[RMDB]
RNA sequence: GGGAACGACUCGAGUAGAGUCGAAAAAUACGCAACAAGACUGAAGUCAACCAGAUGAUAUACGAUCCUGAACCGAUCAACAAAUUGGAUCUAGACAAGCUCAAGAUGAUCAGGACCGAGAUCCAUGAAGAAUAUCUGUCUUCGGACAGAUAUUCUUAAAAGAAACAACAACAACAAC
Reactivity to 2A3 in 0.01 (KOAc 150mM, MgCl2 10mM, bicine 150mM(pH8.5), 24C), signal-to-noise 1, nucleotides 027 to 126: a000u160a010c070g000c060a050a020c020a000a100g090a030c010u060g030a150a000g040u050c000a030a030c030c000a030g040a090u080g020a000u050a030u020a110c020g000a040u030c000c010u040g010a030a080c010c040g020a050u060c050a010a090c000a020a150a010u040u050g080g000a010u000c030u010a060g030a070c050a110a030g000c020u000c030a020a070g040a060u130g000a020u100c010a010g000g060a020c000c020g020a010g000a040u070c000c020a020u090g040
Reactivity to DMS in 0.01 (KOAc 150mM, MgCl2 10mM, bicine 150mM(pH8.5), 24C), signal-to-noise 3, nucleotides 027 to 126: a060u010a030c140g020c080a040a060c070a120a060g000a070c050u020g010a110a060g010u000c040a110a100c100c030a050g020a090u000g000a050u000a050u010a110c070g000a050u000c010c000u010g000a060a300c120c060g000a050u020c070a100a060c160a010a090a100u000u000g000g000a030u000c050u000a060g000a060c040a070a090g000c080u000c060a070a060g000a030u000g020a090u000c020a000g010g000a060c050c050g020a060g000a050u000c040c040a040u000g000
Description:
The data come from the RNA Mapping Database (RMDB), library OK2TRN. This 177-nucleotide RNA was probed chemically with 2A3 and DMS. Values cover nucleotides 27 to 126. The RNA was probed in 150 mM KOAc, 10 mM MgCl2 and 150 mM bicine (pH 8.5) at 24 C.